Source: RMDB library TTRDES, as collected in RNAgym. Chemical mapping of a 177-nucleotide RNA with DMS and 2A3. The 2A3 profile rests on 2,543 reads. As a SHAPE reagent, 2A3 marks flexible, mostly unpaired nucleotides at the ribose 2'-OH. 2A3 adducts were read by reverse transcription with SuperScript II with manganese. In probing experiments dimethyl sulfate is read out at A N1 and C N3, which are open when not base-paired. The DMS profile rests on 2,230 reads.
[RMDB]
RNA sequence: GGGAACGACUCGAGUAGAGUCGAAAAGAUAUGGAGUAUCAUAGGCUCUAAGACAGUACAUCGGAAACGAUGUAUCGAGAGCCUAUGAGUACUCCUAAGUCUAAAAGGGCGGACUUCGGUCCGCCCACACUAUGCGAUUCUUCGGAAUCGCAUAGUGAAAAGAAACAACAACAACAAC
Reactivity to DMS in 0.01 (KOAc 150mM, MgCl2 10mM, bicine 150mM(pH8.5), 24C), signal-to-noise 3, nucleotides 027 to 126: g000a010u000a300u010g000g000a020g000u000a040u000c000a010u000a030g010g000c000u000c000u000a180a120g020a160c300a150g000u000a000c000a000u000c010g010g030a180a120a170c010g000a000u000g000u000a000u000c050g000a030g000a000g010c000c000u010a000u000g010a020g040u000a010c010u010c000c010u000a020a110g000u000c000u000a020a040a190a100g030g040g030c000g020g010a020c000u000u010c250g030g000u000c010c000g030c000c000c000a000
Reactivity to 2A3 in 0.01 (KOAc 150mM, MgCl2 10mM, bicine 150mM(pH8.5), 24C), signal-to-noise 1, nucleotides 027 to 126: g020a000u040a080u130g000g010a010g010u010a010u080c000a010u000a010g010g020c000u000c000u100a160a050g140a020c060a030g020u030a000c010a010u000c010g010g070a020a070a050c000g000a000u010g010u020a010u030c020g000a000g020a000g030c000c000u000a000u000g000a000g000u000a000c000u000c020c000u000a030a010g020u000c030u040a040a070a100a160g010g000g000c030g000g000a010c030u130u140c300g080g050u020c010c070g000c000c000c000a010